[RMDB]
RNA sequence: GGGAACGACUCGAGUAGAGUCGAAAAUGUGUUCCACACCUGGGCCUGAGGUAGACCUGUUGAUCAUGGUCCCCAAGCCGGCCUCACGUGGACCUUUUGGCUCUGAUCUCCGCAAGGGCCUCACGUGUAUCUGGUAACUCUGAUCCUCAACUGGGCCGUAGUGGUUAUUCUUCGGAAUAACCACUACAAAAGAAACAACAACAACAAC
Reactivity to 2A3 in 0.01 (KOAc 150mM, MgCl2 10mM, bicine 150mM(pH8.5), 24C), signal-to-noise 4, nucleotides 027 to 156: u120g090u010g040u080u070c030c000a050c000a030c010c050u120g020g030g020c010c000u050g020a080g060g010u080a040g030a030c000c010u030g030u180u120g120a160u220c030a070u170g010g020u040c020c010c000c010a070a020g080c030c000g000g000c000c010u060c020a030c070g010u010g030g020a050c000c000u030u100u070u060g000g020c000u000c010u040g140a210u080c040u030c060c040g040c100a100a060g040g020g010c000c000u030c010a040c040g030u040g020u020a030u040c030u020g010g040u070a080a100c030u020c020u100g040a070u050c000c030u050c020a070a150c050u050g000g000g010c020c040
Reactivity to DMS in 0.01 (KOAc 150mM, MgCl2 10mM, bicine 150mM(pH8.5), 24C), signal-to-noise 1, nucleotides 027 to 156: u010g010u010g020u000u000c030c030a120c070a050c050c000u010g000g040g040c020c010u000g040a200g050g010u000a040g020a060c020c010u000g000u000u010g020a230u010c020a110u000g030g010u000c000c010c040c050a090a190g020c000c110g020g030c000c100u010c050a040c060g000u000g010g000a000c030c020u010u010u000u010g030g020c010u000c040u000g020a200u000c040u000c060c020g000c150a140a080g000g040g010c000c000u000c010a010c040g010u000g020u000a140u010c040u000g010g000u000a030a080c060u000c060u010g000a090u000c000c020u000c020a040a150c080u010g040g020g020c000c140
Source information:
The data come from the RNA Mapping Database (RMDB), library OK3TST. Structure probing data (2A3 and DMS) for a 207-nucleotide construct. For DMS, 2,806 sequencing reads were counted.